[RMDB]
RNA sequence: GGGAACGACUCGAGUAGAGUCGAAAAGAAAAAACUUGCUACAAUCAUUUUCGUACCAGUGCGUUCCUCCAAACCACCACGCUCACGUUGAUGCGAAGUUGGUCUGAAGGAGUUCAUUGGUACACAACUCAACAGCACGUUUCGACGUGCUGUUGAGAAAAGAAACAACAACAACAAC
Reactivity to 2A3 in 0.01 (KOAc 150mM, MgCl2 10mM, bicine 150mM(pH8.5), 24C), signal-to-noise 4, nucleotides 027 to 126: g030a020a090a000a000a060a000c140u130u150g030c040u140a120c100a140a100u140c060a210u040u040u250u300c120g000u000a000c010c010a010g010u000g000c010g040u000u020c000c000u030c000c010a010a020a000c000c000a020c020c010a010c050g000c000u040c010a160c160g140u130u210g040a030u100g000c010g000a100a020g030u080u070g010g000u000c040u020g000a000a000g000g000a010g000u000u000c000a000u000u000g000g040u000a000c000a000c010a000a010
An RNA of 177 nucleotides, treated with 2A3 and read out base by base. The data come from the RNA Mapping Database (RMDB), libraries RFM100 and RFMREP. 2A3 adducts were read by reverse transcription with SuperScript II with manganese. The RNA was probed in 150 mM KOAc, 10 mM MgCl2 and 150 mM bicine (pH 8.5) at 24 C.